This 177-nucleotide RNA was probed chemically with 2A3 and DMS. Conditions: 150 mM KOAc, 10 mM MgCl2 and 150 mM bicine (pH 8.5), 24 C. Reactivities are given for positions 27 through 126.
[RMDB]
RNA sequence: GGGAACGACUCGAGUAGAGUCGAAAAGAUAUGGACUAGGACAUGCCAAGAGUAACACGACUCGUAUUAUUUCGGAAACGAAAUAAUACGACGAUUAUAAUCUUGGCAACAGCCUAGUCCUAAGUCAGAAGGAUACCUAGUUCGCUAGGUAUCCUUCAAAAGAAACAACAACAACAAC
Reactivity to 2A3 in 0.01 (KOAc 150mM, MgCl2 10mM, bicine 150mM(pH8.5), 24C), signal-to-noise 1, nucleotides 027 to 126: g040a020u120a030u300g000g010a020c020u020a020g060g000a050c000a160u040g000c000c000a040a000g000a040g050u150a120a000c140a000c300g170a160c090u000c010g010u020a030u050u000a000u020u000u010c030g010g040a110a030a080c000g030a000a040a000u000a000a000u000a000c010g010a000c030g000a000u010u040a080u080a110a180u000c000u000u010g000g050c000a000a000c010a000g040c000c000u010a000g020u000c000c000u000a010a000g050u060c060a040
Reactivity to DMS in 0.01 (KOAc 150mM, MgCl2 10mM, bicine 150mM(pH8.5), 24C), signal-to-noise 2, nucleotides 027 to 126: g010a090u000a300u010g020g000a030c000u000a010g000g040a050c110a180u000g000c000c000a000a000g000a060g000u000a100a090c300a070c060g030a300c300u010c000g000u000a000u000u000a000u000u000u010c000g000g000a110a130a130c010g050a010a000a000u000a000a000u000a000c000g010a010c000g000a140u000u000a030u000a070a180u000c000u000u000g000g010c010a030a070c300a150g000c030c010u000a000g000u010c000c000u000a000a080g000u000c100a150